[RMDB]
RNA sequence: GGGAACGACUCGAGUAGAGUCGAAAAGCCGAUGAAAUUAACCGGGCGCCAGCAAAGGUCCAGUCAGCUUUGCUCGAAGCGAUGGAGGAAAAACAGGUUACCAUUGGUGAAGAUUCCAUUCAUCUGCUAUCCAAAGAUAGUUCGCUAUCUUUGGAUAAAAAGAAACAACAACAACAAC
Reactivity to 2A3 in 0.01 (KOAc 150mM, MgCl2 10mM, bicine 150mM(pH8.5), 24C), signal-to-noise 9, nucleotides 027 to 126: g020c000c020g000a020u040g030a020a090a200u160u110a060a040c020c010g050g120g010c020g010c010c010a010g000c040a040a020a030g060g000u030c060c020a040g140u110c040a020g050c010u030u040u050g010c020u090c140g070a100a030g000c010g020a020u080g050g050a090g060g090a080a070a020a020a030c060a050g010g040u030u030a030c040c020a060u040u120g010g000u060g020a040a040g050a120u090u040c010c010a030u080u070c030a070u010c030u040g010c010
Reactivity to DMS in 0.01 (KOAc 150mM, MgCl2 10mM, bicine 150mM(pH8.5), 24C), signal-to-noise 6, nucleotides 027 to 126: g010c020c010g010a020u020g000a100a090a110u030u020a080a060c060c000g010g000g020c060g020c050c060a030g010c070a030a050a090g000g010u010c050c030a070g000u000c080a100g000c010u010u010u010g000c040u020c120g010a110a070g020c010g000a090u010g000g010a090g000g020a030a040a060a120a130c120a100g010g010u000u000a060c190c020a070u020u020g010g010u000g000a080a080g000a190u010u010c010c030a140u030u020c060a060u000c010u010g000c230